[RMDB]
RNA sequence: GGGAACGACUCGAGUAGAGUCGAAAAAGCGUCCAUACGUGGACGCAACUUUGUCUUCACGAGGCUGAACGCGAUAUUGAAAGCGAUCGCAUCGUGAGAGGCUAAGGAGCAUCCAUACGUGGAUGCACGGGCAGUAGCGUUUCGACGCUACUGCCCGAAAAGAAACAACAACAACAAC
Reactivity to 2A3 in 0.01 (KOAc 150mM, MgCl2 10mM, bicine 150mM(pH8.5), 24C), signal-to-noise 2, nucleotides 027 to 126: a010g010c020g000u000c000c000a040u040a060c230g030u000g000g000a000c000g000c000a000a000c000u040u000u050g020u000c000u000u000c000a000c010g000a000g020g020c170u210g050a070a020c000g010c000g050a010u120a140u300u200g170a150a000a000g000c000g020a020u000c000g000c010a020u000c000g050u010g020a060g000a040g000g000c000u000a000a050g050g050a000g020c000a010u000c000c000a010u050a040c220g060u000g000g000a000u000g000c010a010